[RMDB]
RNA sequence: GGGAACGACUCGAGUAGAGUCGAAAAGCUAUCUGUGUCCUAGCCUUGAUGAAAGGCUUGUGAUACGAUGUGAUAGCUGGGUUUAAAAAGUGCAAUAUUAAAACAAAAGCCAUGAGUCUUUUAAGCCGUACUGGUUGCUUUUCGAAGCAACCAGUACAAAAGAAACAACAACAACAAC
Reactivity to 2A3 in 0.01 (KOAc 150mM, MgCl2 10mM, bicine 150mM(pH8.5), 24C), signal-to-noise 3, nucleotides 027 to 126: g010c000u000a000u020c010u080g010u010g010u000c000c000u000a000g060c000c000u100u020g030a160u280g080a120a030a010g000g000c000u020u000g020u050g000a000u020a000c010g100a170u250g080u100g060a010u000a000g000c000u020g000g000g030u050u070u050a090a110a000a000a040g150u160g000c000a010a000u030a110u210u160a230a080a020a060c150a040a180a040a000g090c020c030a060u100g040a020g130u030c020u000u020u000u020a030a000g000c020c000
Reactivity to DMS in 0.01 (KOAc 150mM, MgCl2 10mM, bicine 150mM(pH8.5), 24C), signal-to-noise 2, nucleotides 027 to 126: g010c000u000a000u000c000u030g030u000g000u010c000c000u000a000g030c000c000u010u000g000a130u020g000a190a010a000g000g000c000u000u000g030u040g010a000u000a000c010g000a090u060g040u000g020a020u020a000g000c010u000g010g020g010u000u000u000a010a040a050a040a090g000u020g030c030a080a090u070a100u020u010a050a050a080a110c300a040a040a130a080g010c030c070a080u020g000a130g010u010c060u000u000u000u000a030a070g000c050c030
Conditions: 150 mM KOAc, 10 mM MgCl2 and 150 mM bicine (pH 8.5), 24 C. This 177-nucleotide RNA was probed chemically with 2A3 and DMS. It was measured as part of the RMDB libraries RFM100 and RFMREP.